[RMDB]
RNA sequence: GGGAACGACUCGAGUAGAGUCGAAAAUACAAUAGCGUAGGGAACCAAGCUAAGAGGUUGGAAGUCCAACGGUAGAGGGCUUGGUUCGCAGCUGCUCUAGAAGUGGUCCCACUCCCUACGCCGCAAACGCUUAAAAGUGAUUCGUCACUUUUAAGCGAAAAGAAACAACAACAACAAC
Reactivity to 2A3 in 0.01 (KOAc 150mM, MgCl2 10mM, bicine 150mM(pH8.5), 24C), signal-to-noise 4, nucleotides 027 to 126: u200a020c060a030a150u070a120g000c000g020u000a000g010g010g000a000a000c000c010a020a000g000c010u080a120a030g070a040g160g110u020u010g010g050a240a160g130u150c010c010a010a000c010g040g040u110a090g040a110g150g080g000c010u000u010g000g000u010u010c010g000c010a010g000c000u020g010c000u000c020u070a290g030a300a010g210u010g050g010u050c020c000c000a030c030u040c000c000c000u000a010c010g020c010c000g030c050a090a080a020
Reactivity to DMS in 0.01 (KOAc 150mM, MgCl2 10mM, bicine 150mM(pH8.5), 24C), signal-to-noise 4, nucleotides 027 to 126: u010a060c120a100a090u010a080g010c000g020u000a030g020g000g000a050a050c000c000a000a010g000c010u010a050a100g000a150g030g000u000u010g010g010a300a130g020u000c010c000a010a020c000g000g000u010a110g010a100g000g010g030c000u000u000g000g000u000u000c080g030c140a110g020c010u000g000c030u000c030u010a110g010a100a030g010u000g010g000u000c050c050c010a110c130u010c020c010c020u000a020c020g000c000c140g020c210a040a080a110
The record gives the reactivity of an RNA of 177 nucleotides to 2A3 and DMS. The reactions ran in a buffer of 150 mM KOAc, 10 mM MgCl2 and 150 mM bicine (pH 8.5), at 24 C. 2A3 is a SHAPE reagent: it acylates the 2'-hydroxyl of flexible nucleotides of all four kinds. For DMS the reverse transcriptase was MarathonRT.